[RMDB]
RNA sequence: GGGAACGACUCGAGUAGAGUCGAAAACAUUGCUGCUGACACCAAAGAUAUUACCCCCGCUCACUGGUCGCCUGCGAUCAGGGUUCGGAAUUUUUGGACCAAGGCCCCCUUACUUAACAGGGGGCCGCGGAGAUUGGACAUUCGUGUCCAAUCUCCGAAAAGAAACAACAACAACAAC
Reactivity to DMS in 0.01 (KOAc 150mM, MgCl2 10mM, bicine 150mM(pH8.5), 24C), signal-to-noise 2, nucleotides 027 to 126: c160a090u070u000g000c020u000g020c020u060g010a140c080a050c030c020a000a040a020g000a030u030a110u030u040a110c110c050c100c010c000g000c050u000c000a040c000u010g000g070u000c030g020c050c180u000g030c000g020a020u000c000a020g000g010g000u020u000c000g000g020a030a060u000u020u000u010u020g000g010a200c120c100a110a060g000g010c000c020c000c000c000u000u040a060c140u050u050a110a180c090a010g000g000g010g060g000c010c010g000
Reactivity to 2A3 in 0.01 (KOAc 150mM, MgCl2 10mM, bicine 150mM(pH8.5), 24C), signal-to-noise 5, nucleotides 027 to 126: c040a060u060u170g020c040u050g000c010u050g030a030c010a020c080c020a020a050a010g060a030u050a100u080u260a180c000c020c000c000c000g000c010u010c000a030c010u000g000g030u020c020g020c040c100u220g060c040g000a010u040c010a010g030g010g030u000u020c030g050g050a030a040u060u040u010u070u130g070g010a070c060c060a080a060g020g000c000c000c000c000c000u030u070a130c040u200u170a150a020c020a050g000g000g000g000g070c000c000g010